An RNA of 177 nucleotides, treated with 2A3 and DMS and read out base by base. It was measured as part of the RMDB library OK1LIB. Values are in units of 0.01, from 0 to 300, in steps of 10. For 2A3 the reverse transcriptase was SuperScript II with manganese.
RNA sequence: GGGAACGACUCGAGUAGAGUCGAAAAGAAGAGAAGUGAGUAAACGCCUAUUCGGUAUAAGCACAGCCCGUCAAAAGGCGUGCGGCGAGGGCACCGGAAGCUGUGCUUAUAACUGGGCCCUCGAAGAAAUAAUAUAGCUAUUCGUAGCUAUAUUAUUAAAAGAAACAACAACAACAAC
Reactivity to 2A3 in 0.01 (KOAc 150mM, MgCl2 10mM, bicine 150mM(pH8.5), 24C), signal-to-noise 9, nucleotides 027 to 126: g090a030a010g090a010g030a160a030g070u120g100a030g020u130a100a140a020c010g010c000c010u090a140u140u170c040g020g000u060a080u020a140a020g000c000a000c010a010g010c000c010c000g050u070c070a080a070a010a030g030g010c010g000u010g010c020g040g000c020g010a030g020g030g000c200a270c070c010g010g020a030a020g000c030u050g030u040g040c000u060u060a140u050a080a050c020u030g000g010g000c000c000c000u000c000g000a010a010g020a010
Reactivity to DMS in 0.01 (KOAc 150mM, MgCl2 10mM, bicine 150mM(pH8.5), 24C), signal-to-noise 8, nucleotides 027 to 126: g010a080a070g010a080g000a070a110g010u020g010a120g010u010a070a090a050c050g010c020c010u010a100u030u020c040g010g020u010a070u020a040a030g010c000a010c000a040g020c020c020c020g000u010c270a070a070a100a070g000g000c010g010u000g010c130g010g000c020g000a020g000g010g010c000a070c010c010g010g010a130a100g010c010u010g010u000g010c010u000u000a070u020a060a110c020u000g010g000g000c000c010c000u000c010g010a060a060g000a100